This 177-nucleotide RNA was probed chemically with 2A3 and DMS.
The DMS profile rests on 1,158 reads.
RNA sequence: GGGAACGACUCGAGUAGAGUCGAAAACAGGGUCGUAUGCCCACAGGAAGGUUCCGAGCAUCAUGUACAGGAGGAACAGUCGCUUCAUGUCGUUCACCCGCUCUCUAUGUCAUGAUAGGAUAGUGGCGGAUACAGGUGACUUCGGUCACCUGUAUCCAAAAGAAACAACAACAACAAC
Reactivity to 2A3 in 0.01 (KOAc 150mM, MgCl2 10mM, bicine 150mM(pH8.5), 24C), signal-to-noise 2, nucleotides 027 to 126: c020a000g020g050g000u020c030g040u080a090u300g080c000c050c020a000c040a020g050g090a030a040g150g020u070u060c020c000g020a050g070c030a020u070c040a030u040g070u130a050c040a030g010g040a030g030g020a090a000c000a010g150u140c050g030c120u100u090c040a070u150g050u010c000g010u010u040c070a270c040c010c000g000c000u070c000u010c010u010a080u050g080u070c030a010u080g130a040u110a040g080g000a010u020a070g180u060g070g040c050
Reactivity to DMS in 0.01 (KOAc 150mM, MgCl2 10mM, bicine 150mM(pH8.5), 24C), signal-to-noise 2, nucleotides 027 to 126: c110a270g020g010g010u000c050g030u000a110u000g010c010c050c000a090c140a110g050g060a100a080g000g020u020u000c020c020g000a140g000c210a060u000c030a080u020g010u010a070c080a100g000g010a110g000g000a050a120c110a080g030u030c010g030c030u050u030c050a050u020g030u000c020g000u020u000c040a140c020c020c030g020c040u000c020u010c000u010a030u000g000u020c120a060u020g000a110u000a060g010g000a090u000a070g070u020g010g010c170